[RMDB]
RNA sequence: GGGAACGACUCGAGUAGAGUCGAAAACGCUGGGCGUUAUCUGGCACCUGUGCGACAUGCUGAAGCGCGCACGGCAACAGCGCACAGAAGUGCCAGUGCGCCUGUGCUGAAGCGCGCACGGCAACCGAAAGGUGCGAAACGUACUUUCGAGUACGAAGAGCAAGCAUAUCUUCGGAUAUGCUUGCUCAAAAGAAACAACAACAACAAC
Reactivity to 2A3 in 0.01 (KOAc 150mM, MgCl2 10mM, bicine 150mM(pH8.5), 24C), signal-to-noise 2, nucleotides 027 to 156: c000g120c010u070g010g020g030c030g030u090u130a100u160c040u050g060g010c000a010c000c010u000g030u110g000c020g050a160c130a200u040g000c010u070g020a300a090g000c010g000c010g000c030a020c030g040g030c000a080a040c080a120g040c000g000c010a000c000a030g220a300a090g090u070g040c030c070a000g000u000g000c000g000c000c020u000g000u020g000c010u010g060a220a080g040c000g030c000g000c000a030c030g000g000c000a000a050c000c030g050a070a070a020g030g010u020g000c010g000a070a080a020c020g050u050a010c000u140u160u100c280g070a010g000u010a010c040g050a080a130